[RMDB]
RNA sequence: GGGAACGACUCGAGUAGAGUCGAAAACGCAGGUCCUUCAAUGGACAUUAUCUGCCAUUAUCAGUCGAAGAUCGAACGUUUAACCAAUAAUGUUCUUCAGAAUAUUUUUAAGCUUUGUUAUGCCACAAAUAUACCUCUGGUUCGCCAGAGGUAUAUUAAAAGAAACAACAACAACAAC
Reactivity to DMS in 0.01 (KOAc 150mM, MgCl2 10mM, bicine 150mM(pH8.5), 24C), signal-to-noise 7, nucleotides 027 to 126: c160g010c080a150g010g010u000c010c020u000u020c210a090a060u010g010g000a040c020a090u030u020a080u030c100u000g000c010c060a050u020u010a090u020c090a110g010u010c050g000a090a080g000a030u000c070g010a050a120c020g000u000u000u010a150a170c100c090a070a070u010a030a030u000g000u000u000c010u010u020c140a140g000a060a050u000a010u000u010u020u010u020a060a130g020c070u000u000u000g000u000u000a060u020g010c090c050a090c170a060
Reactivity to 2A3 in 0.01 (KOAc 150mM, MgCl2 10mM, bicine 150mM(pH8.5), 24C), signal-to-noise 9, nucleotides 027 to 126: c060g010c020a020g010g040u020c010c000u090u130c100a120a300u180g000g020a030c020a010u090u090a090u050c020u040g010c030c010a030u100u130a090u150c050a030g090u080c040g050a080a020g030a080u090c060g030a040a040c020g020u030u010u110a040a050c050c020a030a050u130a070a040u040g000u030u000c000u070u070c020a040g070a130a030u090a110u080u110u050u040u100a100a050g010c040u070u100u080g020u060u060a040u160g050c030c000a060c020a050